[RMDB]
This 207-nucleotide RNA was probed chemically with 2A3.

RNA sequence: GGGAACGACUCGAGUAGAGUCGAAAAGCUGUGAAUAGGUAAGCCUAUAUCUGUUCGCACUACAGGCACUAUGUCGCAUCAUGGUCCCUGUGAACUCGAAGCUUGAUGCGACAAGUUUUGAGUCAUCUCAGACACUAUAGGCUUAGUUCUUGAGAGCCGUCACUCCGGUGUUCGCACCGGAGUGACGAAAAGAAACAACAACAACAAC
Reactivity to 2A3 in 0.01 (KOAc 150mM, MgCl2 10mM, bicine 150mM(pH8.5), 24C), signal-to-noise 2, nucleotides 027 to 156: g030c070u030g010u000g030a000a010u030a020g000g030u030a010a000g010c020c010u020a060u000a010u000c010u000g000u010u020c040g000c020a010c010u170a060c010a080g070g020c050a010c020u120a050u070g040u060c100g020c120a050u090c000a010u110g050g000u070c010c010c000u040g010u010g040a090a070c030u020c050g030a020a000g030c000u020u010g020a000u110g100c050g060a040c030a000a000g000u000u000u040u040g020a000g040u030c010a040u000c010u010c020a010g010a050c040a010c070u000a010u000a040g000g000c000u000u030a090g020u060u030c040u070u090g050a100g030a010g130c060

Source: RMDB library OK3TST, as collected in RNAgym. Conditions: 150 mM KOAc, 10 mM MgCl2 and 150 mM bicine (pH 8.5), 24 C. 2A3 adducts were read by reverse transcription with SuperScript II with manganese.